RNA sequence: GGGAACGACUCGAGUAGAGUCGAAAAGUGCACGACUUCGGUCGUGCACAAAUAAAGGCAGUCGAGUGCGUACGGCACAGUCAUACGCUGACGGCACGACAAAAAGUAACGUCUUCGGACGUUACAAGAGAAUGUGAAAGUUCGCUUUCACAUUCUCAAAAGAAACAACAACAACAAC
Reactivity to 2A3 in 0.01 (KOAc 150mM, MgCl2 10mM, bicine 150mM(pH8.5), 24C), signal-to-noise 5, nucleotides 027 to 126: g000u010g000c010a000c000g010a010c040u050u110c260g030g000u000c000g010u000g010c000a000c000a000a000a000u010a000a010a010g090g010c040a010g020u030c020g070a040g140u120g080c000g000u030a070c020g020g000c040a040c050a300g050u060c010a010u030a100c060g010c030u030g030a030c010g010g000c020a020c070g080a030c050a020a120a010a010a010g000u000a000a000c000g000u000c000u010u040c140g060g000a000c000g000u000u000a000c000a000a000
Reactivity to DMS in 0.01 (KOAc 150mM, MgCl2 10mM, bicine 150mM(pH8.5), 24C), signal-to-noise 5, nucleotides 027 to 126: g010u000g010c000a020c010g020a010c000u000u010c180g020g020u000c000g050u000g010c000a000c000a010a050a080u010a050a080a120g010g010c060a080g010u010c010g010a120g010u000g010c030g030u000a030c070g000g010c030a130c190a100g010u000c040a060u000a020c030g010c010u010g000a050c020g010g010c010a070c060g010a080c110a040a080a070a100a090g010u010a000a000c000g020u000c000u000u020c230g020g000a010c000g000u000u000a000c000a070a080